[RMDB]
RNA sequence: GGGAACGACUCGAGUAGAGUCGAAAAGGGGUCCACAGGUCCACUUGGAUUUACUUUUGACGAUCUGAAGCCUCCACGGAUCGAUAAGUUGUCAGUGGAUACUGUGGACGGAGGCACCCAAAACGCAUGAGGUGACGUUCGCGUCACCUCAUGCGAAGAACUAACUUACCUUCGGGUAAGUUAGUUCAAAAGAAACAACAACAACAAC
Reactivity to DMS in 0.01 (KOAc 150mM, MgCl2 10mM, bicine 150mM(pH8.5), 24C), signal-to-noise 1, nucleotides 027 to 156: g030g030g040g020u020c000c000a020c010a050g020g020u000c000c010a010c010u000u010g020g020a090u000u010u000a010c020u020u020u000u000g040a300c150g010a050u000c000u010g070a040a230g010c040c020u020c000c020a300c000g000g000a010u000c000g020a110u000a010a050g010u010u000g000u010c050a070g060u000g020g010a020u000a050c010u000g000u040g050g010a000c020g020g040a050g020g030c020a140c000c010c010a040a040a110a230c020g000c000a020u000g000a050g000g050u000g000a020c000g070u010u010c300g020c100g020u000c000a000c000c010u020c000a000u000g010c040g050a010a040
Reactivity to 2A3 in 0.01 (KOAc 150mM, MgCl2 10mM, bicine 150mM(pH8.5), 24C), signal-to-noise 5, nucleotides 027 to 156: g010g000g050g010u000c010c000a010c000a000g000g000u000c000c010a010c050u160u300g240g030a150u300u290u140a090c050u070u080u080u180g240a100c030g000a010u010c000u010g010a090a010g040c000c000u010c010c000a020c010g000g000a000u000c010g040a040u040a080a020g050u120u090g250u300c240a040g010u010g000g030a020u120a300c000u000g010u010g000g000a000c010g000g000a000g010g030c010a040c010c000c000a000a020a020a030c020g010c000a000u020g000a000g000g010u000g010a000c000g020u030u050c290g020c000g040u010c010a010c000c000u010c000a000u000g000c000g000a000a000